[RMDB]
This 207-nucleotide RNA was probed chemically with 2A3 and DMS. It was measured as part of the RMDB library OK3TST. Values cover nucleotides 27 to 156.
RNA sequence: GGGAACGACUCGAGUAGAGUCGAAAAGACGAAAGCGGACGCAGGCGGCGCGUCAGGGCCAGAAACGUCAGCAAGAUGGCCGAUGCCAGCGCAAAGCGCCAGAAAACGGAGAUUUCGGCAGCGACCUCGCCGUGUUGCAGGCUAAUCGCGAUCCAGGCGUAGCAACUGUUUUCGAACAGUUGCUACGAAAAGAAACAACAACAACAAC
Reactivity to 2A3 in 0.01 (KOAc 150mM, MgCl2 10mM, bicine 150mM(pH8.5), 24C), signal-to-noise 2, nucleotides 027 to 156: g110a020c020g080a100a020a010g040c050g000g060a020c020g010c030a020g020g110c000g010g010c050g010c020g030u020c120a080g040g010g000c040c020a050g020a020a110a010c060g050u070c080a040g040c040a060a060g080a190u040g020g020c000c010g010a000u070g000c000c070a100g050c050g000c110a050a130a050g000c030g010c040c030a080g110a020a060a020a000c080g130g000a060g050a140u070u070u040c030g030g000c000a010g070c030g050a070c020c020u060c030g020c000c000g020u060g040u070u030g030c030a040g000g080c000u010a190a030u110c020g000c030g030a000u010c000c010a050g000g100
Reactivity to DMS in 0.01 (KOAc 150mM, MgCl2 10mM, bicine 150mM(pH8.5), 24C), signal-to-noise 1, nucleotides 027 to 156: g030a170c000g010a070a190a060g010c020g160g000a050c110g020c030a060g000g060c070g020g050c010g070c300g040u040c110a030g040g030g000c040c040a140g010a120a110a050c040g020u010c020a060g000c070a130a140g010a160u000g000g050c000c010g020a150u000g020c010c000a260g010c110g040c040a060a070a280g040c050g030c050c040a100g000a020a030a080a120c080g000g000a160g000a110u000u000u010c020g050g000c060a050g000c090g000a020c010c050u000c080g020c000c020g030u010g000u020u000g020c000a030g000g010c070u000a070a130u000c030g000c000g000a140u000c010c010a100g000g000